[RMDB]
RNA sequence: GGGAACGACUCGAGUAGAGUCGAAAAGAUAUGGAUAAGACCCAGGGAAGAGCUCGAAGAACUCGGAAACGAGGGAGAGCUCUUUGCCUGCUUAUCCUAAGUCAAAACCAAUCCUUCGGGAUUGGAACAAUAAGACUUUGUUCGCAAAGUCUUAUUGAAAAGAAACAACAACAACAAC
Reactivity to 2A3 in 0.01 (KOAc 150mM, MgCl2 10mM, bicine 150mM(pH8.5), 24C), signal-to-noise 3, nucleotides 027 to 126: g020a010u080a030u150g000g010a010u010a010a020g040a110c090c120c090a000g010g000g010a000a010g000a010g010c000u010c060g180a300a090g000a060a040c000u010c000g020g000a070a060a030c000g000a000g010g000g010a040g000a010g000c000u000c010u000u000u000g040c000c000u000g000c000u010u010a000u000c000c000u010a090a030g050u020c040a040a010a040a150c000c000a000a010u000c000c010u050u120c300g160g000g000a010u000u010g000g010a010a030
Reactivity to DMS in 0.01 (KOAc 150mM, MgCl2 10mM, bicine 150mM(pH8.5), 24C), signal-to-noise 8, nucleotides 027 to 126: g010a050u000a300u010g010g000a020u000a000a000g000a230c200c300c070a010g010g010g010a020a020g000a010g010c000u000c000g000a090a120g000a120a230c010u000c000g000g000a110a070a190c010g000a020g000g000g000a070g010a010g010c000u000c000u000u000u000g010c000c000u000g010c000u000u000a000u000c000c000u010a030a100g000u000c050a060a060a110a160c000c000a010a000u000c000c000u000u020c230g020g000g000a010u000u000g000g000a040a080